Chemical mapping of a 177-nucleotide RNA with DMS and 2A3. The RNA was probed in 150 mM KOAc, 10 mM MgCl2 and 150 mM bicine (pH 8.5) at 24 C. DMS adducts were read by reverse transcription with MarathonRT. The data come from the RNA Mapping Database (RMDB), libraries RFM100 and RFMREP. Values cover nucleotides 27 to 126.
RNA sequence: GGGAACGACUCGAGUAGAGUCGAAAAGGGCCUCAACGGUUUCAACACGGAUGCGGUCUCGUGUGCCAAGUGUGAGCGGACGCGAAGCGCUGCGAGCCAGUCGGUCACGUACCGAAGCCCUUCCGAGAGUGAUCUACGACUUCGGUCGUAGAUCACUAAAAGAAACAACAACAACAAC
Reactivity to DMS in 0.01 (KOAc 150mM, MgCl2 10mM, bicine 150mM(pH8.5), 24C), signal-to-noise 1, nucleotides 027 to 126: g000g000g000c000c160u030c170a000a070c000g010g000u010u020u020c110a190a260c160a000c170g000g000a080u090g040c060g030g000u040c090u000c000g030u000g000u120g060c060c010a030a300g050u010g030u040g000a190g000c050g000g000a040c010g000c000g010a140a250g050c010g040c020u010g000c050g000a130g010c020c000a210g000u060c100g000g000u000c010a140c250g000u000a030c040c000g000a160a110g000c000c030c000u000u000c030c010g030a210g000
Reactivity to 2A3 in 0.01 (KOAc 150mM, MgCl2 10mM, bicine 150mM(pH8.5), 24C), signal-to-noise 1, nucleotides 027 to 126: g020g000g000c000c000u000c040a050a040c020g030g050u010u170u100c060a030a000c060a030c130g070g020a030u030g030c050g010g060u090c030u000c040g000u040g030u080g020c010c010a070a050g000u050g000u040g140a060g050c100g000g150a070c010g010c030g050a060a000g060c050g010c060u100g020c000g000a000g000c000c020a060g080u050c050g070g000u020c030a000c110g040u030a010c000c000g000a020a010g060c010c000c000u020u000c000c000g150a210g000